[RMDB]
RNA sequence: GGGAACGACUCGAGUAGAGUCGAAAAUUAUAAUGCGAAGUAUGUUACAAUAGGCAACCUGCAGCCAACUUCUACAUUGUAGGAUGCUGUUCACAGAUCAAAUGGCAGUGGGUGCAUCAUGUAAGCUAAUGAUGCGCUUAAGAUAUGAUCGGUCCUUAUCACCUAGGUUGUUCGCAACCUAGGUGAUAAAAGAAACAACAACAACAAC
Reactivity to 2A3 in 0.01 (KOAc 150mM, MgCl2 10mM, bicine 150mM(pH8.5), 24C), signal-to-noise 2, nucleotides 027 to 156: u120u030a030u000a170a050u090g020c010g030a030a000g030u040a040u150g200u290u100a040c160a210a140u210a260g040g010c020a070a000c050c080u070g030c000a000g010c000c000a050a030c010u050u050c000u060a020c010a160u070u130g010u010a000g080g020a070u130g070c000u040g070u160u280c060a050c040a160g020a050u000c010a010a010a010u020g010g000c040a000g060u090g020g050g000u000g000c000a000u000c000a000u000g070u160a000a170g070c090u050a000a000u000g010a010u010g000c010g000c000u000u000a000a000g040a060u110a040u170g010a000u000c000g080g000u040c000c000u010u000